The record gives the reactivity of an RNA of 177 nucleotides to 2A3 and DMS. DMS adducts were read by reverse transcription with MarathonRT. For 2A3, 4,101 sequencing reads were counted. 2A3 adducts were read by reverse transcription with SuperScript II with manganese.
[RMDB]
RNA sequence: GGGAACGACUCGAGUAGAGUCGAAAAUGCUGGUGCUAGAAGCGCUGCUGUACCGCAUGUCUGUGUGGCGCAUGGGUCAAUCGAUCGGCGACCGUCUUCAGAACUUAGUCCUCCGUGACGAGGAGCGCUGAGCAUACGAAUUCGUUCGUAUGCUCAGAAAAGAAACAACAACAACAAC
Reactivity to 2A3 in 0.01 (KOAc 150mM, MgCl2 10mM, bicine 150mM(pH8.5), 24C), signal-to-noise 3, nucleotides 027 to 126: u100g000c080u150g000g040u030g020c020u070a070g070a190a030g110c010g010c070u030g000c010u010g010u050a020c000c030g000c070a060u050g060u000c040u020g090u010g010u040g050g010c030g000c060a080u130g070g000g030u030c050a110a180u150c140g030a030u000c010g020g000c050g130a240c020c010g040u000c020u140u040c010a040g020a140a080c030u070u070a070g040u050c010c010u070c070c050g120u140g060a070c090g010a040g010g030a040g030c030g000
Reactivity to DMS in 0.01 (KOAc 150mM, MgCl2 10mM, bicine 150mM(pH8.5), 24C), signal-to-noise 4, nucleotides 027 to 126: u010g000c010u020g040g000u000g000c030u010a080g010a080a110g010c050g010c040u000g020c060u000g010u010a050c040c030g010c040a030u010g010u000c050u000g010u000g020u000g000g010c050g020c030a060u000g010g010g010u010c040a140a150u000c120g010a100u010c040g000g020c050g010a100c080c030g000u000c050u000u010c060a040g000a080a090c110u010u010a090g000u000c030c020u010c060c130g000u000g000a150c160g010a090g010g010a080g000c170g000